[RMDB]
RNA sequence: GGGAACGACUCGAGUAGAGUCGAAAAGAUAUGGACCCUGUAUGGAGCUGAUAUCGGAAACGAUAUACCAGCGUUGAAAUACUGGGUCCUAAGUCAAACUUUUAUGGCCGUUCGCGGCCAUAAAAGACAUCCACACUACCUUCGGGUAGUGUGGAUGAAAAGAAACAACAACAACAAC
Reactivity to DMS in 0.01 (KOAc 150mM, MgCl2 10mM, bicine 150mM(pH8.5), 24C), signal-to-noise 1, nucleotides 027 to 126: g000a000u000a070u010g000g010a010c000c000c020u010g040u000a000u010g000g040a030g000c000u000g000a060u000a010u000c000g050g000a070a020a010c000g010a010u000a000u010a260c300c030a010g010c000g010u000u010g000a210a230a000u000a000c030u010g040g000g000u010c010c030u000a000a050g000u030c000a210a090a140c010u000u000u000u000a010u000g000g000c000c000g040u000u000c300g040c010g010g010c010c000a000u000a000a000a000a000g000a210